[RMDB]
RNA sequence: GGGAACGACUCGAGUAGAGUCGAAAAGUGGGCAGCUGUGGCUCUGAAACAUCCAUCGUGGGAGACCUGAGCCGGUGCCUGCAUGUAUCUUGAUGGGUCUUGACGUACCACCCUCUGUCUGCGUGUCAGUAACGUUCAUGUUCGCAUGAACGUUACUAAAAGAAACAACAACAACAAC
Reactivity to 2A3 in 0.01 (KOAc 150mM, MgCl2 10mM, bicine 150mM(pH8.5), 24C), signal-to-noise 2, nucleotides 027 to 126: g020u030g000g040g000c040a160g030c100u150g070u150g300g000c010u000c000u070g080a220a110a020c040a060u030c040c000a060u130c170g130u250g130g050g010a020g060a020c040c020u020g000a000g010c000c000g040g000u030g000c000c080u000g010c010a010u140g050u040a090u040c060u080u070g080a090u110g060g010g000u000c020u060u070g020a040c030g010u020a080c010c010a040c040c030c000u010c030u050g110u000c030u000g040c030g080u050g060u050c020
Reactivity to DMS in 0.01 (KOAc 150mM, MgCl2 10mM, bicine 150mM(pH8.5), 24C), signal-to-noise 4, nucleotides 027 to 126: g020u010g000g020g010c020a020g010c130u000g010u020g040g010c010u010c000u010g010a130a100a100c180a200u000c010c010a120u000c230g010u000g020g010g010a070g010a120c110c040u010g010a030g020c030c030g000g010u000g000c010c000u000g010c030a040u010g010u010a070u000c050u000u000g000a080u010g010g000g010u000c050u000u000g000a130c120g020u000a090c070c040a100c040c020c010u010c030u010g010u000c020u000g010c080g010u000g010u000c110